[RMDB]
RNA sequence: GGGAACGACUCGAGUAGAGUCGAAAAAUGCCGCAUUCAGGGACGGUGACUCUAGUGGGCCACUGUCAAUCUAGCGUUGACAUCUACAUACUAUAUAGUAAUACCAAUACUCAAGACUACGAAACGGGGUACGUGGCUAUUUCGAUAGCCACGUACCAAAAGAAACAACAACAACAAC
Reactivity to 2A3 in 0.01 (KOAc 150mM, MgCl2 10mM, bicine 150mM(pH8.5), 24C), signal-to-noise 2, nucleotides 027 to 126: a000u030g000c000c000g030c000a020u160u060c080a050g040g000g000a060c000g000g010u020g020a020c010u000c000u100a040g140u270g000g010g060c030c010a020c030u020g040u000c000a000a060u000c080u120a070g050c010g060u010u050g040a020c000a060u090c010u030a100c000a030u000a060c080u090a070u050a040u120a300g060u050a000a040u040a120c020c000a010a010u010a070c000u000c050a000a070g100a070c030u050a020c030g090a000a100a000c050g050g070